[RMDB]
RNA sequence: GGGAACGACUCGAGUAGAGUCGAAAAGACAUCAAGCCCCGUGAACACCUCCUUUCACACGGACCCCGUGACUGGCUGCGGCUGCCAGCGGUGAUGAGAACUGAUGACACUCCAGGGCUACCAGGAAAAAAUCGGAAUAAUUCGUUAUUCCGAUUUUAAAAGAAACAACAACAACAAC
Reactivity to DMS in 0.01 (KOAc 150mM, MgCl2 10mM, bicine 150mM(pH8.5), 24C), signal-to-noise 9, nucleotides 027 to 126: g000a130c070a050u010c070a100a140g000c050c020c020c070g020u000g020a070a090c100a090c040c030u000c020c020u010u000u000c060a080c060a090c110g000g000a140c050c040c020c040g020u010g010a110c040u000g010g010c030u000g020c090g010g010c060u000g010c030c020a050g010c060g010g010u000g000a090u000g010a100g000a090a070c060u010g000a070u000g000a080c070a070c040u000c030c040a060g000g000g000c040u000a080c040c040a100g010g020a000a030
Reactivity to 2A3 in 0.01 (KOAc 150mM, MgCl2 10mM, bicine 150mM(pH8.5), 24C), signal-to-noise 2, nucleotides 027 to 126: g040a030c020a080u080c040a020a030g010c030c010c010c030g080u050g050a060a020c030a080c030c010u020c000c000u050u080u060c090a040c010a000c060g100g060a130c000c080c000c000g030u000g090a060c030u020g010g030c010u060g000c080g070g010c020u030g000c000c000a010g000c000g010g010u040g010a090u080g030a030g020a070a040c020u050g010a040u060g010a020c010a020c050u000c000c030a020g000g000g000c020u050a050c020c010a020g120g000a000a190